[RMDB]
Structure probing data (2A3 and DMS) for a 177-nucleotide construct. It was measured as part of the RMDB library OK2TRN. For DMS, 1,671 sequencing reads were counted.
RNA sequence: GGGAACGACUCGAGUAGAGUCGAAAAUUAAUGAUUCUGGAAGACCUAGGAGUGGACGCAGAGCUGUUGACGCUGAUUGAGGCGGCUUUCGGCGAAAUAUCAUCAAUACAUUUGCCCACCAAAACUAACUUGUGUUUGUUUUCGAACAAACACAAGUAAAAGAAACAACAACAACAAC
Reactivity to 2A3 in 0.01 (KOAc 150mM, MgCl2 10mM, bicine 150mM(pH8.5), 24C), signal-to-noise 2, nucleotides 027 to 126: u030u020a060a060u030g100a030u080u100c030u050g000g090a060a030g020a100c020c010u050a080g040g060a100g060u110g020g010a030c030g060c090a010g000a010g040c040u060g000u070u030g020a030c020g000c010u020g020a150u050u190g030a080g040g030c010g040g020c030u000u050u040c000g020g000c020g030a050a030a050u120a020u020c030a010u020c000a060a000u020a100c010a060u050u120u120g000c040c010c050a030c020c030a060a100a020a040c050u030a020
Reactivity to DMS in 0.01 (KOAc 150mM, MgCl2 10mM, bicine 150mM(pH8.5), 24C), signal-to-noise 3, nucleotides 027 to 126: u010u000a070a100u000g010a130u010u000c040u010g000g010a100a170g000a080c040c020u010a100g020g020a110g050u000g000g000a130c090g040c050a060g000a110g020c090u010g000u010u000g010a090c110g010c030u020g030a140u000u010g000a070g000g000c050g000g020c040u000u000u000c060g010g000c040g000a090a070a120u000a060u000c050a090u000c050a030a040u010a100c120a100u000u000u010g000c000c000c010a110c170c110a030a060a070a100c150u020a090